[RMDB]
RNA sequence: GGGAACGACUCGAGUAGAGUCGAAAAGAUGUCAUUCACUCAUGCUUCUAUGCUGGGUGACUCCUACCAUCAUCACAUUCUUCCAAUUCUCCCAGUAGGGUAUGCAGUAGUCAUGUAGGCAGAGCCUCAAAAGAUCUCGUUUCGACGAGAUCUUUUGAAAAGAAACAACAACAACAAC
Reactivity to DMS in 0.01 (KOAc 150mM, MgCl2 10mM, bicine 150mM(pH8.5), 24C), signal-to-noise 4, nucleotides 027 to 126: g000a060u020g020u010c120a090u020u000c040a040c030u010c030a020u030g010c020u000u050c210u020a040u020g010c070u000g000g010g010u010g000a010c230u010c040c010u020a070c060c050a040u000c020a050u010c050a050c120a100u000u010c040u000u000c060c040a090a110u020u010c040u010c040c020c020a080g040u010a070g000g000g030u010a030u010g000c020a040g000u000a070g000u010c030a030u020g010u020a030g000g020c040a080g000a120g000c040c030u030
Reactivity to 2A3 in 0.01 (KOAc 150mM, MgCl2 10mM, bicine 150mM(pH8.5), 24C), signal-to-noise 9, nucleotides 027 to 126: g050a020u110g060u080c040a080u100u010c010a030c010u020c010a030u300g010c020u220u170c060u250a080u300g000c010u020g000g010g000u020g000a020c010u040c000c010u030a060c030c010a030u080c000a010u050c010a020c010a100u090u010c020u070u000c030c010a070a120u070u010c020u030c020c010c010a030g050u070a070g030g030g030u060a030u080g020c020a020g020u090a010g040u070c050a060u090g030u090a050g020g000c020a020g010a030g080c010c000u010
The record gives the reactivity of an RNA of 177 nucleotides to DMS and 2A3. For DMS the reverse transcriptase was MarathonRT. Source: RMDB libraries RFM100 and RFMREP, as collected in RNAgym.